[RMDB]
RNA sequence: GGGAACGACUCGAGUAGAGUCGAAAACACACAAGGUUCGCCUUGUGUGCAAGAAUUGACGAAUACUACCGUAGAAGUAUUCAGGUCACAUAACUACGGAAAUGGCGUUCUGCUUCGGCAGAACGAACCGAGUUAUGGGUUUCGACCCAUAACUCGGAAAAGAAACAACAACAACAAC
Reactivity to 2A3 in 0.01 (KOAc 150mM, MgCl2 10mM, bicine 150mM(pH8.5), 24C), signal-to-noise 3, nucleotides 027 to 126: c020a000c000a010c000a000a010g030g030u060u090c140g080c020c000u000u010g000u000g000u000g010c000a040a010g110a160a160u150u130g010a020c060g000a000a000u020a020c020u060a300c000c030g010u000a020g010a120a000g030u010a000u010u030c040a010g140g040u090c050a060c010a260u170a180a100c030u040a000c010g010g100a010a020a110u210g160g000c000g000u010u010c000u000g030c030u030u060c150g120g000c000a010g020a000a000c000g000a000a040
Reactivity to DMS in 0.01 (KOAc 150mM, MgCl2 10mM, bicine 150mM(pH8.5), 24C), signal-to-noise 1, nucleotides 027 to 126: c000a010c010a000c000a000a000g000g000u000u040c270g010c000c020u000u030g020u010g000u000g010c090a120a090g000a120a030u000u010g000a040c070g030a040a010u000a000c010u000a070c010c060g000u000a010g010a110a040g000u000a030u000u020c000a050g020g010u010c060a080c140a040u000a090a040c000u050a010c070g000g010a210a080a120u030g060g010c010g010u000u000c000u000g000c000u000u000c170g040g020c000a000g010a000a010c000g000a020a040
About this RNA:
This 177-nucleotide RNA was probed chemically with 2A3 and DMS. For DMS the reverse transcriptase was MarathonRT. It was measured as part of the RMDB library M2PK50. The reactions ran in a buffer of 150 mM KOAc, 10 mM MgCl2 and 150 mM bicine (pH 8.5), at 24 C. DMS (dimethyl sulfate) methylates the pairing face of unpaired adenines and cytosines. For 2A3 the reverse transcriptase was SuperScript II with manganese.